Source: RMDB library M2PK50, as collected in RNAgym. The record gives the reactivity of an RNA of 177 nucleotides to DMS. Values cover nucleotides 27 to 126. The RNA was probed in 150 mM KOAc, 10 mM MgCl2 and 150 mM bicine (pH 8.5) at 24 C. DMS adducts were read by reverse transcription with MarathonRT.
[RMDB]
RNA sequence: GGGAACGACUCGAGUAGAGUCGAAAAUCUGUAACGUUCGCGUUACAGAAAAGGGUAUGAGAGUACCAGAUCAGAUCAUCCCAGAUCAGGAAACAGAUCUAAAAAGGGCCACGUUCGCGUGGCCCAAUCACCAAGAAAUGUUCGCAUUUCUUGGUGAAAAAGAAACAACAACAACAAC
Reactivity to DMS in 0.01 (KOAc 150mM, MgCl2 10mM, bicine 150mM(pH8.5), 24C), signal-to-noise 3, nucleotides 027 to 126: u000c000u000g010u000a000a010c000g010u010u010c190g020c020g030u010u010a000c000a010g000a010a060a100a120g000g000g000u000a000u000g000a220g000a170g000u000a020c000c000a130g000a040u010c060a080g010a060u000c000a060u000c000c010c000a060g000a010u000c020a110g020g020a120a080a110c190a070g000a030u000c020u010a040a060a050a120a120g000g000g010c000c000a000c010g000u000u000c210g010c010g030u000g000g010c010c000c000a010a010